RNA sequence: GGGAACGACUCGAGUAGAGUCGAAAAAGUUACUCUUCAACAAAUCAUUCAACUUUCGAGGUAACUCUCGAAUUUUAGUAAUUUUUGCUGAAACUAAGAAUGUGAGAGUUAUAAGGAGUAAUCACAAUCAUACGAGUCAUUUCGAUGACUCGUAUGAAAAAGAAACAACAACAACAAC
Reactivity to DMS in 0.01 (KOAc 150mM, MgCl2 10mM, bicine 150mM(pH8.5), 24C), signal-to-noise 3, nucleotides 027 to 126: a170g010u020u000a020c000u010c000u000u000c120a050a070c030a070a200a100u010c070a020u010u000c030a120a110c220u000u010u000c030g030a010g000g010u000a090a090c300u040c000u000c000g010a010a040u000u000u000u000a020g000u020a020a050u010u010u000u010u010g000c040u000g000a040a030a080c240u000a060a130g010a010a010u000g000u010g010a220g000a140g000u000u000a070u010a160a060g010g000a010g000u000a010a010u010c120a120c130a060a110
Reactivity to 2A3 in 0.01 (KOAc 150mM, MgCl2 10mM, bicine 150mM(pH8.5), 24C), signal-to-noise 2, nucleotides 027 to 126: a000g010u010u000a010c010u000c010u080u080c030a000a010c000a020a110a080u070c000a000u000u020c030a040a040c090u030u020u010c000g000a010g060g020u030a000a030c020u000c010u000c100g000a010a000u000u010u030u030a000g010u020a040a140u030u120u180u250u210g010c030u040g050a040a030a020c040u070a130a050g020a030a010u010g020u040g010a060g020a000g050u060u040a210u060a160a030g000g000a010g000u000a010a020u100c030a010c020a080a120